Structure probing data (DMS and 2A3) for a 177-nucleotide construct. The reactions ran in a buffer of 150 mM KOAc, 10 mM MgCl2 and 150 mM bicine (pH 8.5), at 24 C.

[RMDB]
RNA sequence: GGGAACGACUCGAGUAGAGUCGAAAAGAUAUGGAGCUAAGAGAGCGAUGAAAUCGUCUAUGGUCACAGUGGGUCGGAAACGACCCAUCACAGCCAUAGACGAUGGAGCUCCUUAGCUCCUAAGUCAUCCACUAACUAAGUUCGCUUAGUUAGUGGAAAAAGAAACAACAACAACAAC
Reactivity to DMS in 0.01 (KOAc 150mM, MgCl2 10mM, bicine 150mM(pH8.5), 24C), signal-to-noise 6, nucleotides 027 to 126: g010a040u000a300u010g000g010a010g010c000u000a010a000g010a240g000a010g030c010g020a120u000g000a110a140a020u000c000g010u000c000u010a000u010g010g010u000c060a170c300a280g030u010g000g000g020u000c000g030g010a130a110a250c010g000a010c010c000c010a000u000c030a120c300a300g000c000c010a010u000a000g000a010c000g000a000u000g010g000a050g020c010u000c000c000u000u000a000g000c000u000c000c000u000a010a060g000u010c030a230
Reactivity to 2A3 in 0.01 (KOAc 150mM, MgCl2 10mM, bicine 150mM(pH8.5), 24C), signal-to-noise 2, nucleotides 027 to 126: g040a000u080a070u210g020g000a000g010c000u010a020a000g300a010g010a000g040c050g270a300u070g000a020a040a020u010c000g010u000c010u010a000u010g000g030u230c040a020c010a100g020u020g030g000g000u000c020g000g020a020a080a050c010g010a000c000c010c000a010u000c010a010c020a000g000c000c000a000u000a010g000a000c000g000a000u000g010g000a000g000c000u000c000c000u000u000a000g000c000u000c000c000u000a000a000g000u020c000a050